Structure probing data (2A3) for a 207-nucleotide construct. For 2A3 the reverse transcriptase was SuperScript II with manganese. Source: RMDB library M2RFPK, as collected in RNAgym.
[RMDB]
RNA sequence: GGGAACGACUCGAGUAGAGUCGAAAAAGCGAUGAUACGUCAUCGCAACGAUUGCCUGAUCGUAAAACAGGAGACGGCCAUGGCCGCGACCACGUAAAAAAGCGUAACGUGGUCUACGGACCACGAAAAAAGCGCGGAACGUUCGCGUUCCGCGCAACCAUUGAGAACUGUUCGCAGUUCUCAAUGGAAAAGAAACAACAACAACAAC
Reactivity to 2A3 in 0.01 (KOAc 150mM, MgCl2 10mM, bicine 150mM(pH8.5), 24C), signal-to-noise 2, nucleotides 027 to 156: a000g020c010g000a000u000g000a000u020a120c200g050u010c010a000u000c000g000c010a000a030c000g010a000u010u050g050c010c000u010g000a010u020c040g110u130a020a020a000a000c010a030g010g020a010g050a060c040g020g040c100c000a110u170g020g020c030c000g000c010g010a010c030c040a020c030g010u060a080a040a030a050a130a050g100c040g050u040a070a060c010g010u000g000g000u000c000u000a010c080g040g000a060c000c020a020c000g060a130a010a000a000a080a010g000c000g010c000g010g010a000a000c020g020u080u080c200g030c010g090u000u000c010c020g010c000g000c000a000a000